This 207-nucleotide RNA was probed chemically with DMS and 2A3. The 2A3 profile rests on 7,142 reads. For 2A3 the reverse transcriptase was SuperScript II with manganese. For DMS the reverse transcriptase was MarathonRT. It was measured as part of the RMDB library M2RFPK. Values are in units of 0.01, from 0 to 300, in steps of 10. 2A3 is a SHAPE reagent: it acylates the 2'-hydroxyl of flexible nucleotides of all four kinds.
[RMDB]
RNA sequence: GGGAACGACUCGAGUAGAGUCGAAAACACAAUUCUCUAAGCGAUGAGAAGCGUGUGGAAAAUUAGGGAAGGGCGACGGCUAUAAUCCUAAGAAAGCUUAUCUACAAGCGGAGGUAUUCUCAGAACGAAAACCAUUUGGCGUUCGCGCCAAAUGGAACGUAGUGACAUAGUUCGCUAUGUCACUACGAAAAGAAACAACAACAACAAC
Reactivity to DMS in 0.01 (KOAc 150mM, MgCl2 10mM, bicine 150mM(pH8.5), 24C), signal-to-noise 3, nucleotides 027 to 156: c000a030c020a030a250u010u000c000u000c010u000a110a200g030c160g020a230u000g030a040g020a030a020g010c280g040u000g020u000g020g010a040a070a100a150u010u010a060g010g010g010a130a110g010g020g020c030g030a100c160g020g040c060u020a070u000a060a090u010c020c010u000a050a110g000a060a100a120g020c020u000u000a090u010c060u000a170c030a050a070g030c070g010g010a060g010g000u000a110u000u000c020u000c050a090g010a060a120c080g000a080a080a130a130c000c010a020u000u000u000g020g010c000g010u010u010c300g020c020g000c010c000a000a000a010u000g000g010a020a030
Reactivity to 2A3 in 0.01 (KOAc 150mM, MgCl2 10mM, bicine 150mM(pH8.5), 24C), signal-to-noise 7, nucleotides 027 to 156: c040a000c000a030a070u040u010c010u000c000u080a180a150g110c080g140a130u090g010a070g010a040a010g030c040g020u030g000u060g020g030a050a100a040a070u110u080a070g000g010g040a040a040g070g000g010c040g020a070c060g050g000c010u020a030u050a210a050u050c020c020u040a050a020g060a090a070a010g030c020u070u050a060u110c050u070a080c060a120a020g020c030g040g020a020g010g040u060a110u150u010c050u000c010a040g050a110a040c060g060a060a040a060a100c000c000a000u000u000u000g000g000c000g020u020u040c190g000c000g000c070c000a000a000a000u000g000g000a010a000